[RMDB]
Description:
Conditions: 150 mM KOAc, 10 mM MgCl2 and 150 mM bicine (pH 8.5), 24 C. Structure probing data (2A3 and DMS) for a 177-nucleotide construct. High 2A3 reactivity points to a flexible backbone, as in loops and unpaired stretches. The DMS profile rests on 1,656 reads. For DMS the reverse transcriptase was MarathonRT. For 2A3 the reverse transcriptase was SuperScript II with manganese. Values cover nucleotides 27 to 126. For 2A3, 1,806 sequencing reads were counted.

RNA sequence: GGGAACGACUCGAGUAGAGUCGAAAAGAAGACGUGACGAAAAGUCACGAAAAGGUGCAAUGUCCUGUAAGCACCAAACACGGAAAAACCGUGACAGGACAAACGAGUGGGAGACCACUCGAAAAGAUGAGUAUUACGCGUUCGCGCGUAAUACUCAAAAAGAAACAACAACAACAAC
Reactivity to 2A3 in 0.01 (KOAc 150mM, MgCl2 10mM, bicine 150mM(pH8.5), 24C), signal-to-noise 2, nucleotides 027 to 126: g170a020a010g070a040c010g000u010g000a000c000g050a020a140a000a240g000u020c000a000c000g000a010a020a000a000g000g000u010g010c040a110a230u050g020u000c000c000u020g020u050a050a000g000c000a010c020c000a000a000a000c000a000c000g000g030a170a050a080a000a000c000c000g010u010g010a000c030a000g000g000a000c000a020a090a000c000g000a000g000u000g000g010g000a070g030a030c000c010a000c000u000c000g000a020a000a000a010g170a060
Reactivity to DMS in 0.01 (KOAc 150mM, MgCl2 10mM, bicine 150mM(pH8.5), 24C), signal-to-noise 1, nucleotides 027 to 126: g010a110a040g000a190c020g030u000g000a000c000g000a080a010a090a130g000u000c000a000c010g000a000a030a080a100g000g010u000g060c060a160a140u000g000u000c000c010u000g000u020a020a100g040c020a030c040c010a010a170a100c000a010c000g030g080a210a160a070a220a100c000c000g050u000g000a040c050a070g000g010a020c040a080a190a110c000g030a010g120u000g000g000g000a180g000a180c000c000a000c000u000c000g010a000a000a050a090g000a160